[RMDB]
RNA sequence: GGGAACGACUCGAGUAGAGUCGAAAACAUCCCUGCAAAUCGAGGUGGUUGCGGGGAACGUUCUGGAUAGAACGAAAGCAAUCAUUUGCGACGGUAUGUCAAUAGACUGACAUGUGAAUAAGGGCACGUAAGUACUAACUUUCGAGUUAGUACUUACAAAAGAAACAACAACAACAAC
Reactivity to 2A3 in 0.01 (KOAc 150mM, MgCl2 10mM, bicine 150mM(pH8.5), 24C), signal-to-noise 8, nucleotides 027 to 126: c040a070u040c000c000c000u000g030c050a020a020a030u020c000g010a010g010g050u020g000g000u000u010g000c000g010g000g030g030a010a040c000g000u000u000c010u020g110g130a080u070a240g000a010a000c000g020a060a000a000g000c000a010a000u020c000a010u020u010u140g090c000g000a000c020g050g030u100a010u010g000u000c000a010a060u050a110g100a060c050u000g000a000c000a010u030g020u030g080a070a030u120a060a030g010g020g000c030a000c070
Reactivity to DMS in 0.01 (KOAc 150mM, MgCl2 10mM, bicine 150mM(pH8.5), 24C), signal-to-noise 9, nucleotides 027 to 126: c200a130u010c000c000c000u000g010c120a050a110a180u010c020g010a070g000g010u000g000g000u000u010g000c000g000g000g010g030a070a050c010g000u000u000c000u010g010g020a080u050a020g010a010a000c010g000a090a090a250g000c010a010a010u010c010a020u000u000u000g010c010g010a030c170g000g000u020a020u000g000u000c010a050a100u020a110g010a180c250u000g000a020c010a010u000g000u010g000a080a080u030a080a070g000g000g020c280a100c170
Structure probing data (2A3 and DMS) for a 177-nucleotide construct.
The RNA was probed in 150 mM KOAc, 10 mM MgCl2 and 150 mM bicine (pH 8.5) at 24 C.
For DMS the reverse transcriptase was MarathonRT.
Source: RMDB library OK1LIB, as collected in RNAgym.